The record gives the reactivity of an RNA of 177 nucleotides to 2A3 and DMS.
The DMS profile rests on 4,078 reads.
RNA sequence: GGGAACGACUCGAGUAGAGUCGAAAAGCGCGGGGCGUGCGAGGUGAGUGUGUGCGCCCGCCCCUGCGCCCCUCCCCCUGCCUACAACUUGAUCUUAUUUGAUCGGGUAGUGGCCCCAGCCUGCCCGCAAUGUCAUUGAGUUCGCUCAAUGACAUUGAAAAGAAACAACAACAACAAC
Reactivity to 2A3 in 0.01 (KOAc 150mM, MgCl2 10mM, bicine 150mM(pH8.5), 24C), signal-to-noise 2, nucleotides 027 to 126: g010c000g000c000g000g000g000g010c040g020u060g010c000g020a060g010g090u160g060a140g060u230g020u060g010u020g070c010g010c020c020c000g000c000c000c000c000u030g010c000g010c010c000c000c010u000c010c000c000c000c000u000g000c020c010u070a030c020a060a010c020u000u030g010a010u040c000u060u200a240u300u250u150g020a000u020c000g010g040g000u020a020g020u000g010g040c010c010c010c000a030g040c000c010u050g000c000c010c000g040
Reactivity to DMS in 0.01 (KOAc 150mM, MgCl2 10mM, bicine 150mM(pH8.5), 24C), signal-to-noise 2, nucleotides 027 to 126: g040c030g040c020g010g000g000g020c070g000u000g010c020g000a060g010g020u000g010a130g040u010g020u000g030u000g000c000g000c000c020c000g000c000c010c000c010u010g030c000g020c000c010c010c000u000c000c000c010c010c010u010g010c010c020u010a030c060a100a040c020u010u000g000a020u010c000u000u020a210u010u020u000g010a020u000c000g000g000g000u000a060g040u000g010g000c000c040c010c020a120g010c090c060u000g010c020c020c030g020

Background: The 2A3 profile rests on 3,395 reads.